[RMDB]
RNA sequence: GGGAACGACUCGAGUAGAGUCGAAAACUACCGUCGGCGCCCGGUUUUCUGCAAAUUGCGCCGGUAUCCACGAUCCCACUACGGCUACCCAUUGAUCGUGGGGACGACGGUUAGCGUCGGCGCGUAACGUGCAUUAGUAUUUCGAUACUAAUGCACGAAAAGAAACAACAACAACAAC
Reactivity to 2A3 in 0.01 (KOAc 150mM, MgCl2 10mM, bicine 150mM(pH8.5), 24C), signal-to-noise 9, nucleotides 027 to 126: c020u010a010c010c010g000u010c010g000g010c010g000c020c010c000g010g030u100u070u090u080c130u110g050c050a150a270a300u220u260g030c020g000c010c010g010g000u040a040u010c000c000a010c020g020a100u020c040c030c020a120c100u200a030c050g060g000c020u080a120c010c010c040a080u070u180g040a100u060c020g010u010g000g000g000g020a010c020g010a010c030g050g000u070u140a020g000c000g000u020c000g010g010c000g000c040g030u020a120a020
Reactivity to DMS in 0.01 (KOAc 150mM, MgCl2 10mM, bicine 150mM(pH8.5), 24C), signal-to-noise 5, nucleotides 027 to 126: c060u000a020c040c000g000u000c000g020g010c010g030c000c090c020g010g000u010u010u020u040c180u050g010c060a050a120a080u020u030g010c040g040c010c000g000g000u040a090u030c010c010a190c000g000a060u010c000c140c080a090c100u030a060c090g010g020c060u010a100c110c090c050a160u020u010g000a020u000c040g010u010g000g000g000g000a050c080g000a060c040g010g010u010u030a060g010c010g030u000c000g000g000c010g000c160g030u000a080a150